Background: An RNA of 207 nucleotides, treated with DMS and 2A3 and read out base by base. Source: RMDB library OK3TST, as collected in RNAgym. Conditions: 150 mM KOAc, 10 mM MgCl2 and 150 mM bicine (pH 8.5), 24 C.
RNA sequence: GGGAACGACUCGAGUAGAGUCGAAAAAGCGGACCUGGUGCUCACAUGGACGGUACUCGACGAAGGCUGAUUCGCGCCAGAACGCGGGUUCGACAACAGGUAUCGGUGAUGCUGCGGGAGCGGGCCGGAAGGCGGCAGGUUUCUCGCCAACGAGUUCCUCAACUUAUUUUUUCGAAAAUAAGUUGAGAAAAGAAACAACAACAACAAC
Reactivity to DMS in 0.01 (KOAc 150mM, MgCl2 10mM, bicine 150mM(pH8.5), 24C), signal-to-noise 2, nucleotides 027 to 156: a120g010c020g030g010a150c080c000u000g030g000u000g000c040u010c070a120c070a180u010g040g010a100c050g030g000u000a050c020u020c050g010a210c060g000a170a160g030g000c020u030g000a120u010u000c040g020c040g000c020c010a280g010a020a050c040g020c010g000g010g000u000u000c050g000a060c030a080a090c050a080g000g000u000a040u000c020g000g020u010g010a110u000g000c000u010g020c030g020g030g010a110g020c060g000g000g020c010c020g040g020a120a120g020g020c020g030g000c000a090g000g020u000u000u020c010u000c020g000c000c040a040a080c040g010a150g000u000u010c020
Reactivity to 2A3 in 0.01 (KOAc 150mM, MgCl2 10mM, bicine 150mM(pH8.5), 24C), signal-to-noise 4, nucleotides 027 to 156: a010g010c010g010g010a090c010c000u030g010g080u030g030c030u070c070a110c040a150u160g040g030a080c020g000g050u120a130c010u020c050g150a150c060g040a160a050g050g000c020u060g020a250u160u050c060g010c020g000c060c020a030g050a100a020c020g000c010g040g000g000u030u050c030g030a020c040a110a000c020a060g050g000u040a030u060c020g040g030u050g010a030u090g010c050u030g010c020g010g010g000a010g000c050g010g030g000c010c030g050g030a050a050g130g040c010g020g000c000a020g070g010u080u240u010c040u020c010g000c000c010a050a050c040g030a020g040u050u030c000